The record gives the reactivity of an RNA of 177 nucleotides to DMS.
Source: RMDB library OK2TST, as collected in RNAgym.

RNA sequence: GGGAACGACUCGAGUAGAGUCGAAAAUCUUCCGGCCGGAUCUCGACGCCAUCGAGGCGGGCGGAAAGAUGCGGCGAGGCUGGUGUAUUCAGGCGCCAUGCCUCCGGCAGGAUACGCUGAGGCGAAAAAAAUGCGUAUCCUUCGGGAUACGCAUUUUAAAAGAAACAACAACAACAAC
Reactivity to DMS in 0.01 (KOAc 150mM, MgCl2 10mM, bicine 150mM(pH8.5), 24C), signal-to-noise 2, nucleotides 027 to 126: u010c050u000u000c000c030g030g010c000c000g000g040a070u000c010u000c020g010a200c200g000c200c140a210u020c050g010a080g000g050c020g010g000g020c000g010g000a040a050a070g010a010u000g020c030g010g030c060g000a010g000g020c040u010g010g010u000g020u010a110u020u000c240a130g010g000c010g030c000c000a030u010g020c010c000u000c020c110g000g000c070a070g010g010a210u000a070c160g020c030u000g040a100g010g030c100g000a000a000a060

The DMS profile rests on 1,295 reads.